This 177-nucleotide RNA was probed chemically with DMS and 2A3. For DMS the reverse transcriptase was MarathonRT. Values are in units of 0.01, from 0 to 300, in steps of 10.
[RMDB]
RNA sequence: GGGAACGACUCGAGUAGAGUCGAAAAAAAAAAGAUAUGGAUCUAGCAGCUAUGAAGUGUACGGUUUGCCAUUCGGAAACGAAUGGUAAUUUGUACAUGGAGCUGUCUAGAUCCUAAGUCAAAAAAAGCUAAUUCAUUAGUUCGCUAAUGAAUUAGCAAAAGAAACAACAACAACAAC
Reactivity to DMS in 0.01 (KOAc 150mM, MgCl2 10mM, bicine 150mM(pH8.5), 24C), signal-to-noise 2, nucleotides 027 to 126: a000a010a110a110a070a060g000a030u020a300u000g000g000a020u000c000u000a000g010c000a010g030c000u020a200u000g000a160a220g000u000g010u000a000c000g010g000u000u010u000g030c000c010a020u000u000c000g000g000a080a060a170c000g010a010a020u010g010g000u010a010a000u000u000u000g010u000a000c000a000u000g010g000a010g010c000u010g000u000c000u010a010g000a000u000c010c000u000a010a090g000u000c030a000a020a070a140a020a090a120
Reactivity to 2A3 in 0.01 (KOAc 150mM, MgCl2 10mM, bicine 150mM(pH8.5), 24C), signal-to-noise 1, nucleotides 027 to 126: a000a000a000a000a000a000g050a040u110a010u060g000g000a000u010c000u010a000g000c010a000g000c000u090a210u300g020a050a000g000u020g000u000a010c040g040g050u030u040u020g000c000c020a000u000u000c020g010g000a060a040a010c000g000a010a000u000g000g000u010a000a000u000u000u070g010u020a010c000a010u000g000g000a000g010c000u010g120u000c000u000a000g000a000u010c000c000u010a000a000g000u010c000a020a030a000a000a020a230a030
For 2A3 the reverse transcriptase was SuperScript II with manganese. Source: RMDB library TTRDES, as collected in RNAgym. The RNA was probed in 150 mM KOAc, 10 mM MgCl2 and 150 mM bicine (pH 8.5) at 24 C.